[RMDB]
RNA sequence: GGGAACGACUCGAGUAGAGUCGAAAAUGGUGGUUGCAUAAGAUUUUGAAUAUUAAAUGCUACUGAUUUGUAUAAUUCAUGCAUUUAAUAGUACUAAACGCUACUGAAUUGUAUAAUUUUAAAUGAUUAAUUUCAUCUUAUGUAAAUUUCACCUCAACGUACCGAUGAUAUUCGUAUCAUCGGUACGAAAAGAAACAACAACAACAAC
Reactivity to 2A3 in 0.01 (KOAc 150mM, MgCl2 10mM, bicine 150mM(pH8.5), 24C), signal-to-noise 1, nucleotides 027 to 156: u060g000g000u010g000g020u010u010g020c000a000u000a000a000g010a000u000u000u290u250g000a050a010u010a010u170u000a020a020a030u060g010c040u060a080c030u000g000a070u030u100u040g170u140a150u040a130a110u010u010c030a010u270g000c010a030u000u000u000a000a030u010a010g000u020a030c030u130a210a250a050c040g000c040u080a070c040u060g000a060a060u140u030g010u000a220u090a190a130u050u060u040u300a020a200a250u080g000a010u100u100a200a050u110u090u060c000a010u000c000u020u000a010u000g000u030a000a160a100u070u150u040c000a000c000c010u010c030a050a020

Structure probing data (2A3) for a 207-nucleotide construct. The 2A3 profile rests on 464 reads. It was measured as part of the RMDB library OK3TST. The RNA was probed in 150 mM KOAc, 10 mM MgCl2 and 150 mM bicine (pH 8.5) at 24 C.